[RMDB]
RNA sequence: GGGAACGACUCGAGUAGAGUCGAAAACUGAUCAAACAUGCGCUUCCAAUAGUAGAAGGACGUUAAGCAUUUAUCAUUGAACUAUAAUUGUUCAUUGAAGUCAUUGAUGCAAACUCCUUGGUCACACGAUGCGUCGAUAGUUCGCUAUCGACGCAUCAAAAGAAACAACAACAACAAC
Reactivity to DMS in 0.01 (KOAc 150mM, MgCl2 10mM, bicine 150mM(pH8.5), 24C), signal-to-noise 1, nucleotides 027 to 126: c010u000g010a010u010c050a000a050a090c110a180u000g030c120g050c120u000u010c020c040a130a140u050a120g010u000a070g000a010a000g010g010a020c300g000u000u010a030a100g000c020a010u000u000u000a090u000c000a000u000u010g040a010a040c000u020a040u020a050a170u010u000g050u000u000c020a050u000u010g060a020a120g040u020c260a230u000u000g000a060u000g000c000a110a050a030c020u000c010c000u010u000g010g000u000c080a060c170a090c240
Reactivity to 2A3 in 0.01 (KOAc 150mM, MgCl2 10mM, bicine 150mM(pH8.5), 24C), signal-to-noise 2, nucleotides 027 to 126: c010u010g020a040u040c000a070a050a040c010a060u110g000c080g000c080u030u000c010c010a020a160u090a150g090u020a050g090a110a000g000g010a030c120g020u030u040a060a030g000c000a020u000u060u070a150u050c000a000u000u000g000a000a000c010u040a040u160a300a270u300u110g020u010u010c010a000u000u000g010a050a000g040u110c040a040u040u240g000a000u000g000c070a030a040a010c000u080c000c060u000u000g040g020u000c010a010c000a010c160